[RMDB]
RNA sequence: GGGAACGACUCGAGUAGAGUCGAAAAACUUUUAGCGAUUAUCGUUAUAGAAAAGUCCUUGGCAUAUCGCUAUGCACAGAGGUAUUAGUAGCGCAAUAGCUAUUGAAGGACAUUACCUCUCAAAUAAGUGAUUCAAAUAAUUCGUUAUUUGAAUCACAAAAGAAACAACAACAACAAC
Reactivity to 2A3 in 0.01 (KOAc 150mM, MgCl2 10mM, bicine 150mM(pH8.5), 24C), signal-to-noise 5, nucleotides 027 to 126: a000c030u120u150u030u060a000g020c020g030a050u080u140a050u280c030g020u010u070a110u090a180g130a040a090a040a020g070u030c000c020u030u050g050g000c030a020u020a000u070c030g010c050u010a030u060g030c070a070c010a130g020a010g010g010u040a050u040u070a040g020u000a010g000c000g000c080a170a230u060a090g000c000u010a000u010u060g040a060a030g040g020a010c010a010u010u020a020c010c000u000c010u030c100a070a150a060u170a300a030
Reactivity to DMS in 0.01 (KOAc 150mM, MgCl2 10mM, bicine 150mM(pH8.5), 24C), signal-to-noise 5, nucleotides 027 to 126: a110c060u000u010u000u000a010g010c010g000a140u010u010a060u000c050g020u000u000a060u010a080g000a100a090a080a090g010u000c010c000u010u010g020g010c030a020u000a010u000c110g000c100u000a010u000g010c080a090c150a030g010a020g010g010u000a040u000u000a020g020u000a010g010c000g020c120a090a100u010a200g010c000u000a010u000u000g000a050a050g010g010a040c080a050u010u000a050c000c000u010c010u000c160a060a070a090u010a060a130
Chemical mapping of a 177-nucleotide RNA with 2A3 and DMS. DMS (dimethyl sulfate) methylates the pairing face of unpaired adenines and cytosines.